[RMDB]
RNA sequence: GGGAACGACUCGAGUAGAGUCGAAAACCUUUAACUACACUGAGGUCACACCCCUAUGUUUGUGACAUAGCAGCAGGUUGCCAUGGAGAUGAUGGCUUUAUCAGCCACACUACCUUGCCAUGACCUCGAAACUGGGUACCUUCGGGUACCCAGUUUCAAAAGAAACAACAACAACAAC
Reactivity to 2A3 in 0.01 (KOAc 150mM, MgCl2 10mM, bicine 150mM(pH8.5), 24C), signal-to-noise 1, nucleotides 027 to 126: c000c000u040u150u060a070a050c060u160a050c060a050c100u140g000a010g000g000u000c000a060c010a050c060c000c050c010u000a000u000g000u000u120u030g200u220g120a020c000a000u030a000g000c030a030g000c030a030g070g000u080u060g030c100c050a020u050g000g030a030g000a140u060g090a050u010g000g000c000u080u030u020a180u100c120a050g000c050c000a000c000a030c000u120a200c000c010u020u030g010c020c020a160u060g000a000c000c000u010c100
Reactivity to DMS in 0.01 (KOAc 150mM, MgCl2 10mM, bicine 150mM(pH8.5), 24C), signal-to-noise 1, nucleotides 027 to 126: c000c000u080u000u100a010a110c200u020a080c030a090c140u000g000a090g000g000u000c000a080c300a170c000c000c050c000u000a000u030g000u000u000u000g000u030g100a100c090a000u000a050g000c280a000g000c170a030g000g060u000u000g010c230c000a140u040g000g000a030g000a110u000g000a160u020g000g000c000u000u000u100a040u040c150a100g020c000c000a020c030a110c000u000a040c000c060u000u010g030c170c180a080u000g000a000c000c000u040c060